[RMDB]
RNA sequence: GGGAACGACUCGAGUAGAGUCGAAAAGAUAUGGAGAGAACAACAGCGUCCCAUCGGAAACGAUGGAGACGACAUGUUCCUCCUAAGUCAAAACCCCGAUAUGUUAGUUCGCUAACAUAUCGGGGAACCUAUCACACCGGUUCGCCGGUGUGAUAGGAAAAGAAACAACAACAACAAC
Reactivity to DMS in 0.01 (KOAc 150mM, MgCl2 10mM, bicine 150mM(pH8.5), 24C), signal-to-noise 1, nucleotides 027 to 126: g000a030u000a190u000g000g000a020g000a160g010a000a000c000a030a070c210a190g000c050g000u000c020c000c000a000u010c000g000g000a100a050a110c010g000a000u000g010g030a080g030a000c000g000a020c080a120u000g000u000u010c010c000u000c000c000u000a020a040g000u010c010a070a070a030a090c000c000c030c010g000a000u000a000u000g000u000u000a020g000u000u000c210g000c050u000a010a000c010a000u000a000u000c000g020g000g000g010a000a000
Reactivity to 2A3 in 0.01 (KOAc 150mM, MgCl2 10mM, bicine 150mM(pH8.5), 24C), signal-to-noise 2, nucleotides 027 to 126: g000a020u050a040u070g010g010a000g010a020g010a020a000c020a030a020c080a150g220c010g000u000c010c000c000a010u000c000g010g030a040a050a030c010g000a000u010g020g030a170g030a050c000g100a010c010a030u010g010u000u000c000c010u010c010c000u010a080a030g010u020c030a000a070a110a300c000c010c000c000g010a000u000a000u000g000u000u020a010g010u050u060c300g020c220u000a000a010c010a000u000a000u010c000g000g000g000g000a010a010

Structure probing data (DMS and 2A3) for a 177-nucleotide construct. For DMS, 1,258 sequencing reads were counted. The reactions ran in a buffer of 150 mM KOAc, 10 mM MgCl2 and 150 mM bicine (pH 8.5), at 24 C. Values cover nucleotides 27 to 126.